An RNA of 207 nucleotides, treated with 2A3 and read out base by base.
[RMDB]
RNA sequence: GGGAACGACUCGAGUAGAGUCGAAAACGAAGGGUCUGUUCGACUUCGUCUCCGAUCAACGGCUGUGGGAGACGGCGAAGGACGCUGCAUUCGAGCGCGGCGAGGUCCUCGACGACGUCGUCACCGGUUGGCUCCGCGACUACAUCAACGCCGAACCCUAUGCUACUGCCUUCGGGCAGUAGCAUAGAAAAGAAACAACAACAACAAC
Reactivity to 2A3 in 0.01 (KOAc 150mM, MgCl2 10mM, bicine 150mM(pH8.5), 24C), signal-to-noise 1, nucleotides 027 to 156: c100g000a000a010g050g010g000u040c060u050g150u080u030c110g050a110c030u040u050c020g030u030c020u020c010c000g050a120u000c050a060a000c010g030g000c020u030g000u080g090g000g000a030g000a000c000g000g030c010g010a090a000g000g000a010c000g020c010u040g000c000a020u140u120c160g090a090g020c090g000c030g050g020c000g000a050g130g000u060c000c000u000c090g020a010c030g020a030c000g090u020c000g030u040c040a080c110c080g060g050u020u090g040g020c020u000c030c000g000c000g040a090c010u070a000c030a070u170c080a160a050c090g010c010c000g000a000a000c000c000
Values cover nucleotides 27 to 156. Source: RMDB library OK3TST, as collected in RNAgym. Conditions: 150 mM KOAc, 10 mM MgCl2 and 150 mM bicine (pH 8.5), 24 C.